[RMDB]
RNA sequence: GGGAACGACUCGAGUAGAGUCGAAAAGAUAUGGACCGUGUUAAGCAACAGCACGCAGUCGGAAACGACUGUCGUGACAUGCUUGGGCACGGUCCUAAGUCAAAUCAGGGUUGUUCGCAACCCUGAAGUUCACAAUGGAGUUCGCUCCAUUGUGAACAAAAGAAACAACAACAACAAC
Reactivity to DMS in 0.01 (KOAc 150mM, MgCl2 10mM, bicine 150mM(pH8.5), 24C), signal-to-noise 3, nucleotides 027 to 126: g010a060u000a300u010g010g010a010c010c000g030u000g020u000u000a040a030g010c030a060a090c300a170g000c000a000c000g010c010a030g000u000c000g020g000a050a100a150c000g010a000c010u000g010u020c010g020u000g000a040c130a260u000g010c000u000u010g020g020g030c000a010c020g000g000u010c000c000u000a020a060g020u000c040a080a100a130u010c010a010g000g020g000u010u000g020u000u030c300g010c010a040a010c000c000c000u000g000a000a070
Reactivity to 2A3 in 0.01 (KOAc 150mM, MgCl2 10mM, bicine 150mM(pH8.5), 24C), signal-to-noise 2, nucleotides 027 to 126: g020a000u040a040u110g000g000a000c020c000g030u020g010u030u060a050a000g030c080a060a170c080a250g060c000a010c010g020c000a000g010u010c000g010g000a050a050a010c000g010a000c000u040g060u150c010g020u000g060a060c010a050u210g000c020u030u010g040g040g040c000a000c000g030g000u000c000c010u000a000a000g000u010c020a030a000a020u030c000a000g000g000g020u010u020g050u040u100c280g020c150a010a000c000c000c000u000g000a020a020
Source: RMDB library TTRDES, as collected in RNAgym. Structure probing data (DMS and 2A3) for a 177-nucleotide construct. For DMS the reverse transcriptase was MarathonRT. For DMS, 3,032 sequencing reads were counted. The reactions ran in a buffer of 150 mM KOAc, 10 mM MgCl2 and 150 mM bicine (pH 8.5), at 24 C.